[RMDB]
RNA sequence: GGGAACGACUCGAGUAGAGUCGAAAAUCACUAUCGGGGUCAGAAUGAGCGCAGCGCCAUCGUUGGCGAAUAACGCAGCGACAGCUGCACCAAGCAGCACUAUCCAGGUGAACAGCAAGCGUCCGCGCUGUCAUGGGAUCUUCGGAUCCCAUGACAGAAAAGAAACAACAACAACAAC
Reactivity to DMS in 0.01 (KOAc 150mM, MgCl2 10mM, bicine 150mM(pH8.5), 24C), signal-to-noise 2, nucleotides 027 to 126: u000c050a110c090u000a090u010c070g020g000g010g040u000c030a040g020a130a040u000g020a110g040c040g020c030a050g020c070g010c060c090a070u000c190g060u010u010g040g010c030g010a170a080u010a110a080c180g020c010a030g020c020g000a120c200a070g000c000u020g010c020a110c050c070a070a140g010c040a060g060c060a070c050u000a030u000c060c040a060g000g020u000g020a090a090c050a040g000c030a090a100g000c000g020u010c040c110g040c160g000
Reactivity to 2A3 in 0.01 (KOAc 150mM, MgCl2 10mM, bicine 150mM(pH8.5), 24C), signal-to-noise 1, nucleotides 027 to 126: u010c000a000c080u070a120u150c060g050g000g000g040u000c000a030g120a120a160u160g040a070g120c020g000c020a020g020c010g030c010c000a060u070c110g140u060u100g080g050c020g000a010a020u110a050a010c020g000c030a000g020c030g090a090c040a050g010c040u020g000c040a000c000c040a060a040g040c060a010g020c020a020c060u040a070u020c000c010a020g070g000u040g070a080a020c030a040g020c020a100a060g040c020g040u030c030c040g000c000g000
Chemical mapping of a 177-nucleotide RNA with DMS and 2A3. It was measured as part of the RMDB library OK2TRN. Reactivities are given for positions 27 through 126. For 2A3 the reverse transcriptase was SuperScript II with manganese. For 2A3, 1,004 sequencing reads were counted. DMS adducts were read by reverse transcription with MarathonRT. The reactions ran in a buffer of 150 mM KOAc, 10 mM MgCl2 and 150 mM bicine (pH 8.5), at 24 C.